[RMDB]
RNA sequence: GGGAACGACUCGAGUAGAGUCGAAAAUACACUUUACGUGUGCUGGUUUCAUUACUUUGUCCCAAACCAGGCACGCGUAAUUAAAGGCCAGUUUGGCCAGGUCCGCGUUAUCGAUGGUCUCCAAUAAGAACAUCUGGAAGUUCGCUUCCAGAUGUUCAAAAGAAACAACAACAACAAC
Reactivity to 2A3 in 0.01 (KOAc 150mM, MgCl2 10mM, bicine 150mM(pH8.5), 24C), signal-to-noise 1, nucleotides 027 to 126: u040a000c030a010c060u050u030u010a000c000g000u000g000u020g010c000u000g040g000u020u000u060c030a120u100u110a130c060u110u060u300g070u090c000c000c000a000a000a020c010c000a040g060g160c000a000c000g000c000g000u000a000a000u020u120a160a070a010g030g000c000c010a090g100u090u230u100g040g000c010c020a000g000g000u000c020c020g050c030g030u100u020a080u080c050g010a150u080g000g000u010c010u050c010c020a040a010u090a140a070
Reactivity to DMS in 0.01 (KOAc 150mM, MgCl2 10mM, bicine 150mM(pH8.5), 24C), signal-to-noise 2, nucleotides 027 to 126: u040a120c110a140c090u000u000u000a000c010g000u000g030u000g010c000u010g020g030u000u000u000c120a110u010u010a100c190u010u000u000g020u000c010c030c020a050a040a010c010c000a020g010g050c030a000c000g010c000g020u000a010a000u010u010a060a080a100g000g030c000c010a120g030u000u020u010g000g000c000c020a020g000g000u000c050c020g040c070g000u000u000a060u000c040g010a050u000g000g010u010c030u010c030c090a090a110u020a070a110

This 177-nucleotide RNA was probed chemically with 2A3 and DMS.
It was measured as part of the RMDB library M2PK90.
DMS adducts were read by reverse transcription with MarathonRT.
The 2A3 profile rests on 1,148 reads.